[RMDB]
RNA sequence: GGGAACGACUCGAGUAGAGUCGAAAACCACCGAUCCAAAAAUAAAAUAAAAGCUGCGACGGACGUGGAUUCCGGCCACCGUUGCAGCUGGCCGGAUUGCACGGGAUUGGUGGCGUAGGAAACUACGGGUGCUACAAGGCUUCGGCCUUGUAGCACCAAAAGAAACAACAACAACAAC
Reactivity to 2A3 in 0.01 (KOAc 150mM, MgCl2 10mM, bicine 150mM(pH8.5), 24C), signal-to-noise 1, nucleotides 027 to 126: c010c000a000c000c020g010a000u000c030c010a000a000a150a000a000u260a030a110a040a080u180a000a100a000a000g000c020u060g040c040g070a010c000g150g000a060c020g000u040g000g080a060u100u000c010c000g030g060c040c000a020c000c010g140u070u150g030c010a000g010c000u000g000g000c000c000g030g000a030u010u110g170c030a000c030g000g000g000a000u020u020g010g000u000g000g000c000g020u000a000g000g030a110a000a000c000u000a000c050g000

Conditions: 150 mM KOAc, 10 mM MgCl2 and 150 mM bicine (pH 8.5), 24 C. An RNA of 177 nucleotides, treated with 2A3 and read out base by base. The data come from the RNA Mapping Database (RMDB), library OK1LIB.